[RMDB]
RNA sequence: GGGAACGACUCGAGUAGAGUCGAAAAUUGAGCAAUGUACCACGCCAGGAAUGGGCAUUGAAAAGUUGACAAUGAGAUGGAAUAGAUCUUUCUGUAGCAUAUCGUACAACUUGGAUGUGAUGGAAGGCCUGAGACCUUAGUUCGCUAAGGUCUCAGGAAAAGAAACAACAACAACAAC
Reactivity to DMS in 0.01 (KOAc 150mM, MgCl2 10mM, bicine 150mM(pH8.5), 24C), signal-to-noise 2, nucleotides 027 to 126: u020u000g020a130g030c070a060a050u000g010u000a090c040c020a080c110g050c010c020a060g020g000a040a100u000g010g000g010c030a030u010u010g000a170a090a030a020g000u000u000g010a060c100a100a020u000g010a040g010a020u000g010g000a040a040u010a060g000a110u010c150u000u000u000c000u000g010u000a040g000c000a010u010a060u000c100g010u000a060c060a000a010c020u010u000g000g000a130u000g000u010g000a030u020g000g030a070a090g000g020
Reactivity to 2A3 in 0.01 (KOAc 150mM, MgCl2 10mM, bicine 150mM(pH8.5), 24C), signal-to-noise 1, nucleotides 027 to 126: u050u100g040a010g020c020a030a030u020g010u000a190c000c020a050c070g070c030c040a110g030g220a120a040u050g060g000g010c010a010u000u000g020a050a030a030a030g030u020u030g010a010c000a000a080u000g000a040g010a030u030g000g030a000a040u040a100g200a220u060c140u080u080u030c030u050g130u030a000g020c030a010u100a060u120c100g010u090a150c010a040a000c000u000u000g050g010a030u040g090u070g000a080u020g060g030a040a000g060g030
This 177-nucleotide RNA was probed chemically with DMS and 2A3. DMS adducts were read by reverse transcription with MarathonRT. It was measured as part of the RMDB library OK2TRN. The 2A3 profile rests on 1,013 reads. High DMS reactivity at an A or C suggests that its Watson-Crick edge is free. 2A3 adducts were read by reverse transcription with SuperScript II with manganese. Values cover nucleotides 27 to 126.